Background:
Structure probing data (2A3) for a 207-nucleotide construct.

[RMDB]
RNA sequence: GGGAACGACUCGAGUAGAGUCGAAAAUAAGAGGCAGAGGAACUAGAACCAAGACAUUCAUUCAUUCAUUUGAGACAGUGUCAUUCCGUCACCCAGGUUGGAGUGCAGUGGCACGAUCUCAGCUCAUUACAAACUUGACUCCUAGGUUCAAGCAAUAGAGGAUCCUAGGUUUCGACCUAGGAUCCUCAAAAGAAACAACAACAACAAC
Reactivity to 2A3 in 0.01 (KOAc 150mM, MgCl2 10mM, bicine 150mM(pH8.5), 24C), signal-to-noise 1, nucleotides 027 to 156: u120a070a020g010a000g030g000c040a010g020a030g090g030a020a070c030u010a010g010a060a010c040c000a070a000g070a200c030a050u080u110c020a030u060u020c000a000u060u000c050a160u010u040u140g050a030g000a000c090a170g020u010g000u000c000a030u070u000c110c040g110u170c030a010c050c000c000a030g210g010u220u300g010g000a110g010u040g000c000a000g000u000g000g000c020a020c030g060a130u030c000u000c000a010g020c010u040c020a020u000u180a050c070a050a070a010c010u020u070g020a020c040u020c000c000u020a020g010g000u030u090c010a000a000g000c000a010a040u040a070

Source: RMDB library OK3TST, as collected in RNAgym. For 2A3 the reverse transcriptase was SuperScript II with manganese. Reactivities are given for positions 27 through 156. The reactions ran in a buffer of 150 mM KOAc, 10 mM MgCl2 and 150 mM bicine (pH 8.5), at 24 C.